[RMDB]
The record gives the reactivity of an RNA of 177 nucleotides to DMS.
The RNA was probed in 150 mM KOAc, 10 mM MgCl2 and 150 mM bicine (pH 8.5) at 24 C.
The DMS profile rests on 1,029 reads.
In probing experiments dimethyl sulfate is read out at A N1 and C N3, which are open when not base-paired.
RNA sequence: GGGAACGACUCGAGUAGAGUCGAAAAAGUGAGAGCCGCUACAGCACGGAUGGCCGUCAUGUGUUGCCUUUGGAGUCCAGGGUUCUUUCUCUUAGCACGUAUGUUAUACACGCGAAGUUUGAUACCCCCGUUUCGAGAAGUUCGCUUCUCGAAACGGAAAAGAAACAACAACAACAAC
Reactivity to DMS in 0.01 (KOAc 150mM, MgCl2 10mM, bicine 150mM(pH8.5), 24C), signal-to-noise 1, nucleotides 027 to 126: a060g000u010g000a180g020a090g040c020c030g020c040u000a090c070a070g000c080a070c030g040g000a050u010g030g050c130c060g000u010c090a020u040g010u000g010u010u010g020c050c020u000u010u000g040g010a150g000u000c040c050a040g010g030g000u010u010c120u000u000u000c000u000c050u000u000a150g000c010a170c120g050u000a060u000g000u000u000a080u000a040c020a170c120g030c040g000a050a060g000u000u000u000g030a090u000a200c030c040c030